[RMDB]
RNA sequence: GGGAACGACUCGAGUAGAGUCGAAAAAGAGGAGGAGCUUCCCUGAAAGUCUCUGUGUGCAGGCUGUGAACCCAAGGACAUGGGAUUCACACCUAACACUGGAAGCACAGUCACUUGUGGGCUACAGGAUGUGUACAGGGAUGCGGCAAGGGACAGAGCGGGCAAAAUACUUCGGUAUUUUGCCCGCAAAAGAAACAACAACAACAAC
Reactivity to 2A3 in 0.01 (KOAc 150mM, MgCl2 10mM, bicine 150mM(pH8.5), 24C), signal-to-noise 1, nucleotides 027 to 156: a010g050a030g050g000a020g030g010a030g000c060u080u030c060c010c010u010g150a180a030a030g030u010c000u000c020u050g000u000g030u040g000c080a000g050g030c200u040g010u000g000a000a000c010c000c000a040a030g110g060a020c050a170u110g000g020g010a020u000u010c010a010c000a000c020c000u050a110a020c060a030c110u070g030g050a070a000g020c020a010c020a040g050u100c030a070c190u040u050g030u100g110g000g000c000u110a000c030a000g050g000a080u030g040u020g010u000a020c010a010g030g000g000a030u090g000c060g010g010c070a050a000g020g000g000a000c010a000g100a050